RNA sequence: GGGAACGACUCGAGUAGAGUCGAAAAGUUUAGCUCUAUAUGGAAGUUUAUCACUAGAAACAUCAACUGUGAUGUAUUGGCCUGGUGUAAAUUCACUAAAGUCAUAUUCUUCAGUUUCAACUGUAAACUAUCAAACCCUCUUCGGAGGGUUUGAUAGAAAAGAAACAACAACAACAAC
Reactivity to DMS in 0.01 (KOAc 150mM, MgCl2 10mM, bicine 150mM(pH8.5), 24C), signal-to-noise 1, nucleotides 027 to 126: g040u000u000u000a300g060c080u030c030u010a130u000a040u000g000g000a010a010g040u000u000u000a000u010c050a040c080u000a010g010a190a120a020c210a130u020c020a230a140c280u000g000u080g030a000u000g000u030a030u010u000g000g010c240c010u010g010g040u010g040u000a000a030a060u000u020c010a020c000u000a070a200a070g050u000c010a000u000a050u000u000c000u000u030c090a040g000u000u000u010c140a000a050c130u060g010u020a000a090a130
Reactivity to 2A3 in 0.01 (KOAc 150mM, MgCl2 10mM, bicine 150mM(pH8.5), 24C), signal-to-noise 3, nucleotides 027 to 126: g000u030u070u100a050g020c010u020c090u120a060u040a110u300g050g020a010a060g040u070u080u000a190u280c020a000c010u040a010g050a010a170a000c010a060u080c020a110a150c160u110g100u100g240a000u000g060u120a280u030u070g090g030c030c000u030g000g020u000g040u020a040a060a020u170u120c030a000c060u100a100a060a000g050u010c040a080u000a130u090u040c040u050u030c010a030g000u100u090u110c120a110a050c020u020g050u200a090a000a000